RNA sequence: GGGAACGACUCGAGUAGAGUCGAAAAUCAUCGUUCUUCGGAACGAUGAAGUAUAACGCGGGCUCCGGACACAGGGGUAGCUGGCCUGGGAUAGUCACAGUAUGGGGCAAACUUUCGAGUUUGCCAAACAAGACAUUCUAUUCGUAGAAUGUCUUGUAAAAGAAACAACAACAACAAC
Reactivity to DMS in 0.01 (KOAc 150mM, MgCl2 10mM, bicine 150mM(pH8.5), 24C), signal-to-noise 8, nucleotides 027 to 126: u000c000a000u000c000g020u000u000c000u000u010c210g010g010a010a010c000g010a000u000g000a010a070g010u010a080u010a070a120c120g010c060g010g010g000c030u000c040c050g000g000a090c090a080c110a070g010g000g010g010u000a050g010c050u000g000g010c030c020u000g000g000g000a070u000a070g010u000c050a060c090a090g010u010a090u010g010g010g010g010c000a010a010a010c000u000u000u020c170g010a030g010u000u000u000g010c000c010a030a050
Reactivity to 2A3 in 0.01 (KOAc 150mM, MgCl2 10mM, bicine 150mM(pH8.5), 24C), signal-to-noise 3, nucleotides 027 to 126: u000c010a010u010c000g020u010u000c010u030u030c250g090g000a000a000c000g000a000u000g000a000a010g000u030a110u040a150a050c070g000c040g050g090g010c010u020c050c020g040g030a040c050a010c010a100g030g000g000g050u020a030g030c030u040g010g000c000c020u020g000g000g040a080u090a090g050u050c020a020c020a090g100u120a120u230g190g000g000g000c010a010a000a000c030u050u070u110c160g020a020g000u010u000u000g000c000c000a000a020